[RMDB]
Structure probing data (2A3 and DMS) for a 207-nucleotide construct. Conditions: 150 mM KOAc, 10 mM MgCl2 and 150 mM bicine (pH 8.5), 24 C.
RNA sequence: GGGAACGACUCGAGUAGAGUCGAAAAACCUUAUUUUGAGAAGCUGAGGGAUUUGGCCCAUAGAAGCUUCAGCAACCGACUUUAAAUAGCACGGUGCUAAUACCAACGAGCAACUAGAAUGAUAAGUAAAACGUUGACAAGUUCGCUUGUCAACGAACCUUCCUAAACACUUCGGUGUUUAGGAAGGAAAAGAAACAACAACAACAAC
Reactivity to 2A3 in 0.01 (KOAc 150mM, MgCl2 10mM, bicine 150mM(pH8.5), 24C), signal-to-noise 2, nucleotides 027 to 156: a000c100c010u190u030a300u080u190u190u100g130a090g000a040a000g000c000u010g000a010g020g050g020a100u070u060u060g030g000c010c000c000a020u120a130g050a020a000g000c000u000u010c000a010g000c010a040a040c010c000g020a000c030u090u080u170a160a300a300u180a130g000c000a010c030g000g000u010g000c000u010a050a000u010a070c010c000a030a050c120g080a020g090c070a050a030c060u080a100g030a150a120u200g120a150u110a180a030g010u080a040a170a000a000c010g000u000u000g000a000c010a010a010g000u030u110c060g040c200u000u010g000u000c000a000a000c000g000a000a000
Reactivity to DMS in 0.01 (KOAc 150mM, MgCl2 10mM, bicine 150mM(pH8.5), 24C), signal-to-noise 1, nucleotides 027 to 156: a080c040c030u040u000a120u000u000u020u000g040a200g000a080a060g050c070u000g030a100g010g000g010a120u000u000u010g030g030c060c000c000a080u000a140g020a100a000g050c030u000u000c000a080g000c030a030a060c010c000g020a090c010u000u000u020a120a140a080u000a000g030c000a070c000g000g010u000g000c010u010a080a050u000a100c040c010a080a160c110g010a130g000c040a090a090c030u020a140g000a070a080u020g010a110u000a050a030g020u000a040a140a100a100c000g010u000u010g010a020c000a030a000g060u000u000c300g060c000u000u000g010u000c020a000a000c000g000a020a020